[RMDB]
RNA sequence: GGGAACGACUCGAGUAGAGUCGAAAAGAUAUGGAUCCAGUAUUUCGACGAUCAAUAAGUGUCGGAAACGACAUAUUGGGAGAAAUACGGAUCCUAAGUCAAAAUCGUCCAGGUUCGCCUGGACGAAGAUCGAUUCUAUCUUCGGAUAGAAUCGAUCAAAAGAAACAACAACAACAAC
Reactivity to 2A3 in 0.01 (KOAc 150mM, MgCl2 10mM, bicine 150mM(pH8.5), 24C), signal-to-noise 3, nucleotides 027 to 126: g000a010u010a010u070g000g010a000u010c000c040a050g010u000a020u010u030u030c260g210a300c010g000a100u000c000a010a010u130a240a010g240u080g000u200c000g020g000a010a000a000c010g000a000c020a020u060a020u010u000g000g010g000a040g000a000a000a000u000a010c030g000g000a000u000c000c000u000a010a000g000u000c010a010a000a020a300u070c000g000u000c010c000a010g070g070u070u090c300g060c090c010u010g020g000a010c000g000a010a000
Reactivity to DMS in 0.01 (KOAc 150mM, MgCl2 10mM, bicine 150mM(pH8.5), 24C), signal-to-noise 2, nucleotides 027 to 126: g000a000u000a030u010g000g010a010u000c000c000a060g030u010a010u000u010u000c000g000a100c300g000a010u000c000a000a000u000a040a300g020u010g010u000c000g040g000a020a000a020c000g000a000c000a080u000a010u000u000g000g020g010a000g010a030a010a020u000a010c000g000g000a000u000c000c000u000a000a080g000u000c020a110a080a110a140u010c000g000u010c000c000a010g000g010u000u010c300g030c020c000u000g000g000a000c000g010a000a020